An RNA of 207 nucleotides, treated with 2A3 and read out base by base. It was measured as part of the RMDB library M2RFOK.

[RMDB]
RNA sequence: GGGAACGACUCGAGUAGAGUCGAAAAGCUCUGGAAUUGAGGCCCCUCUAACAAUAAUCCAAAACUACUUCGCAGAGUAAUCUGCCGAAUCGUAGGGUGCCCAUUACUAUCUAUUUUUGGAGCAUCUAAAACUGUCAGUGCUUCGGCACUGACAGAACCUACUACCUCCCUUCGGGGAGGUAGUAGGAAAAGAAACAACAACAACAAC
Reactivity to 2A3 in 0.01 (KOAc 150mM, MgCl2 10mM, bicine 150mM(pH8.5), 24C), signal-to-noise 1, nucleotides 027 to 156: g080c030u030c000u020g070g100a180a110u080u050g030a090g050g000c010c030c000c000u110c150u140a110a160c090a090a130u240a010a060u130c050c060a020a070a050a000c000u070a040c010u050u000c010g000c000a000g010a010g030u040a070a210u020c000u040g040c130c040g000a000a040u080c130g020u040a000g050g000g000u010g020c020c000c040a030u130u070a040c080u120a040u140c000u040a140u130u160u000u080u010g070g000a040g010c010a000u030c040u100a110a070a000a090c010u000g000u000c000a000g010u000g030c000u010u050c090g050g000c000a010c000u000g000a000c000a000g000a000a000